Description
Structure probing data (2A3 and DMS) for a 177-nucleotide construct.
[RMDB]
RNA sequence: GGGAACGACUCGAGUAGAGUCGAAAACAAGUGAUCGCAAGAUCGUUAUAUUGGUUGAACUCUAGAUAAAAUGCAGAUCGUAUGGUCUUGUACCGACGACAGAUCAUUCAAAUGUCUGCCCUAUCAUACAAAUGCCUAUAUUCGUAUAGGCAUUUGUAAAAGAAACAACAACAACAAC
Reactivity to 2A3 in 0.01 (KOAc 150mM, MgCl2 10mM, bicine 150mM(pH8.5), 24C), signal-to-noise 5, nucleotides 027 to 126: c010a010a120g100u030g110a010u010c010g020c060a040a040g000a030u000c020g010u100u030a180u040a070u120u190g080g020u010u070g050a070a030c030u000c050u050a030g020a040u050a080a130a050a020u120g050c010a010g050a070u100c070g020u050a060u080g000g020u000c000u050u210g040u100a190c040c070g120a090c080g000a030c080a010g020a020u040c020a010u080u090c060a020a060a140u240g010u040c000u010g000c000c000c000u090a090u110c020a010u030
Reactivity to DMS in 0.01 (KOAc 150mM, MgCl2 10mM, bicine 150mM(pH8.5), 24C), signal-to-noise 5, nucleotides 027 to 126: c050a130a100g010u010g010a010u000c010g000c230a130a130g000a010u000c000g010u010u010a080u030a130u010u010g000g000u000u000g010a060a140c120u000c040u000a070g010a050u010a030a050a110a080u010g010c030a040g010a060u000c170g000u000a030u000g020g000u020c010u020u020g020u010a040c080c120g010a040c120g000a020c030a020g010a040u000c020a000u000u000c050a060a090a090u020g000u000c000u000g000c060c160c070u000a050u000c060a280u000